[RMDB]
RNA sequence: GGGAACGACUCGAGUAGAGUCGAAAAAGUCCAUGGCUGCAACUCGUGGAGCGACUUGCGUCAUUGGUACUACAAAGUUCUACGGUGGCUGGGAUUUCAUGCUUAAAACAUUGUACAAAGAUGUUGAGACUACAUUCAUGUUCGCAUGAAUGUAGUCAAAAGAAACAACAACAACAAC
Reactivity to DMS in 0.01 (KOAc 150mM, MgCl2 10mM, bicine 150mM(pH8.5), 24C), signal-to-noise 3, nucleotides 027 to 126: a070g000u000c000c000a060u010g010g020c000u000g020c020a060a030c110u000c020g070u000g020g010a140g010c030g020a040c080u000u000g010c130g000u000c010a100u020u020g020g000u000a030c040u000a060c110a090a080a180g000u000u000c010u000a060c070g010g010u000g000g010c030u000g010g000g000a080u010u010u000c080a030u010g000c040u000u000a070a090a030a050c040a010u000u000g000u020a130c300a070a110a160g000a020u000g010u000u000g000a260
Reactivity to 2A3 in 0.01 (KOAc 150mM, MgCl2 10mM, bicine 150mM(pH8.5), 24C), signal-to-noise 3, nucleotides 027 to 126: a000g010u000c000c010a050u040g020g000c050u110g010c060a040a020c020u010c040g030u070g100g160a140g070c010g020a040c020u020u010g000c010g010u010c000a030u040u190g080g000u100a020c000u010a020c020a010a080a030g030u030u010c030u050a050c030g020g000u040g000g000c030u000g050g000g030a030u040u070u110c060a050u140g040c030u040u080a040a060a000a000c020a030u030u060g020u080a070c070a080a080a030g040a030u020g000u050u040g010a020
Chemical mapping of a 177-nucleotide RNA with DMS and 2A3. The reactions ran in a buffer of 150 mM KOAc, 10 mM MgCl2 and 150 mM bicine (pH 8.5), at 24 C. The DMS profile rests on 2,341 reads. The 2A3 profile rests on 2,929 reads. It was measured as part of the RMDB library 15KREP.